The record gives the reactivity of an RNA of 177 nucleotides to 2A3 and DMS. The data come from the RNA Mapping Database (RMDB), library OK2TRN. 2A3 adducts were read by reverse transcription with SuperScript II with manganese. The RNA was probed in 150 mM KOAc, 10 mM MgCl2 and 150 mM bicine (pH 8.5) at 24 C. For 2A3, 1,319 sequencing reads were counted. For DMS, 2,247 sequencing reads were counted.

[RMDB]
RNA sequence: GGGAACGACUCGAGUAGAGUCGAAAAUUAUGAGUGGCUUGUUGGGUUAAUUCUCAGCUCGAGCAAGACGAAACGAAAACUGCUCGGCAGUGAAAUAACACAUGGGGAUAGCGGUUUGACAAUUCCACUAAUAAACCGCAUUCGUGCGGUUUAUUAGAAAAGAAACAACAACAACAAC
Reactivity to 2A3 in 0.01 (KOAc 150mM, MgCl2 10mM, bicine 150mM(pH8.5), 24C), signal-to-noise 2, nucleotides 027 to 126: u160u030a130u150g060a030g060u060g050g030c120u110u040g040u120u000g050g020g000u000u020a020a060u120u010c010u030c020a030g010c070u130c080g010a010g000c010a060a010g030a070c080g040a170a180a020c020g040a070a000a080a040c010u000g000c010u000c020g020g030c030a020g000u020g040a040a070a030u140a080a000c040a060c040a160u120g030g000g020g040a000u010a040g080c070g010g060u010u070u140g040a040c020a030a030u100u040c040c000a040
Reactivity to DMS in 0.01 (KOAc 150mM, MgCl2 10mM, bicine 150mM(pH8.5), 24C), signal-to-noise 3, nucleotides 027 to 126: u020u020a100u010g000a100g030u000g010g010c180u000u000g010u000u000g010g010g010u000u000a040a090u000u000c010u010c020a080g010c010u020c060g000a010g010c000a030a100g020a150c100g030a100a100a140c180g000a090a040a140a130c070u000g000c010u000c030g010g010c010a080g000u010g000a020a030a080u010a040a060c030a080c060a090u000g000g000g000g000a090u000a090g010c110g000g000u000u010u010g010a070c130a050a180u000u000c020c050a170